[RMDB]
An RNA of 177 nucleotides, treated with DMS and 2A3 and read out base by base. Values cover nucleotides 27 to 126. For 2A3, 8,154 sequencing reads were counted. The RNA was probed in 150 mM KOAc, 10 mM MgCl2 and 150 mM bicine (pH 8.5) at 24 C. DMS adducts were read by reverse transcription with MarathonRT.

RNA sequence: GGGAACGACUCGAGUAGAGUCGAAAAUAUGGGCCUUUUUGCUAUGUGCAAAUAAACAGCUUUCGCUUCGAGACAGAUUGCCACAAUCAGUGGCGCGAAGGCAGGCAGAGUUUAUUGUGUAGCAUUCGGCUUUCGAUAGCUUCGGCUAUCGAAGGCCAAAAGAAACAACAACAACAAC
Reactivity to DMS in 0.01 (KOAc 150mM, MgCl2 10mM, bicine 150mM(pH8.5), 24C), signal-to-noise 5, nucleotides 027 to 126: u030a100u010g000g000g010c150c020u010u000u000u010u000g020c020u000a020u010g020u040g000c090a030a020a010u000a000a000a020c030a120g000c010u000u000u000c080g000c000u000u020c040g000a170g010a150c200a100g000a090u030u030g010c010c020a000c000a100a130u050c210a130g010u000g000g020c020g000c010g000a030a010g020g000c050a060g000g010c050a090g010a140g000u000u000u010a000u000u000g010u000g000u020a010g020c020a050u020u010c130
Reactivity to 2A3 in 0.01 (KOAc 150mM, MgCl2 10mM, bicine 150mM(pH8.5), 24C), signal-to-noise 2, nucleotides 027 to 126: u180a040u020g010g030g040c000c000u030u050u020u020u040g000c000u010a000u010g090u020g030c000a000a000a030u010a000a010a000c000a010g000c000u000u030u040c050g010c040u020u010c010g010a010g030a020c020a010g070a070u060u160g010c000c000a010c000a000a110u220c040a010g010u000g000g000c010g000c000g000a000a000g000g010c010a000g010g000c000a000g050a010g080u000u000u010a000u000u020g020u000g000u000a000g000c000a010u030u050c060